Chemical mapping of a 177-nucleotide RNA with 2A3. Conditions: 150 mM KOAc, 10 mM MgCl2 and 150 mM bicine (pH 8.5), 24 C. Source: RMDB library RFM100, as collected in RNAgym.
RNA sequence: GGGAACGACUCGAGUAGAGUCGAAAAUCUGCCGGAUUAUGGCUGAACGCCUCUAAGUCAGAAUCCGUACCGGAACGCGGCGAUGUUGCCCCGCACGUUGUAGUUGGAUACGAAUAGGCCUACGGGCGCAUCCUGCGACUUUCGAGUCGCAGGAUGCAAAAGAAACAACAACAACAAC
Reactivity to 2A3 in 0.01 (KOAc 150mM, MgCl2 10mM, bicine 150mM(pH8.5), 24C), signal-to-noise 1, nucleotides 027 to 126: u000c000u000g000c000c000g000g000a000u090u080a050u020g000g000c000u000g020a060a060c050g050c000c000u000c000u150a010a010g000u030c010a000g120a120a080u000c020c000g000u050a140c000c010g050g010a070a000c040g000c000g180g050c080g110a280u190g000u270u020g090c000c000c000c000g040c000a060c230g000u020u000g000u100a020g010u080u000g000g000a010u040a060c010g080a130a160u110a290g030g020c000c000u000a000c100g120g000g030c000